[RMDB]
RNA sequence: GGGAACGACUCGAGUAGAGUCGAAAAUACUUAUGUUAUGCACAACUAUGGUAUUGUUGUCUUCUGUGUAUCACUUGUAUGUCUUCAAUCAGGUCUUAUCAAGUGAUGUUAUGUUUGAAGAUGCCCAUCAGUCUUAAUCCUUCGGGAUUAAGACUGAAAAAGAAACAACAACAACAAC
Reactivity to DMS in 0.01 (KOAc 150mM, MgCl2 10mM, bicine 150mM(pH8.5), 24C), signal-to-noise 3, nucleotides 027 to 126: u000a020c000u000u000a080u010g010u000u000a100u000g020c300a120c200a020a030c040u010a210u000g020g000u000a010u000u000g000u010u010g010u000c000u000u000c020u000g040u000g020u000a020u000c000a000c000u000u000g020u000a060u020g000u000c000u000u010c180a130a070u000c300a040g000g000u010c010u000u000a140u000c010a030a010g010u000g000a020u000g000u000u010a040u010g000u000u010u010g000a020a010g010a020u000g010c010c000c000a160
Reactivity to 2A3 in 0.01 (KOAc 150mM, MgCl2 10mM, bicine 150mM(pH8.5), 24C), signal-to-noise 3, nucleotides 027 to 126: u000a000c020u050u060a070u140g010u020u000a150u300g220c070a070c040a160a010c010u020a020u130g020g040u020a010u010u080g080u060u150g020u050c000u010u000c000u050g070u010g010u040a000u010c000a000c000u000u000g010u030a060u120g010u000c010u050u080c090a160a300u090c030a070g000g050u010c020u060u100a080u170c010a020a000g000u000g010a010u000g000u010u080a030u040g180u060u130u040g000a000a020g010a000u020g030c000c000c000a040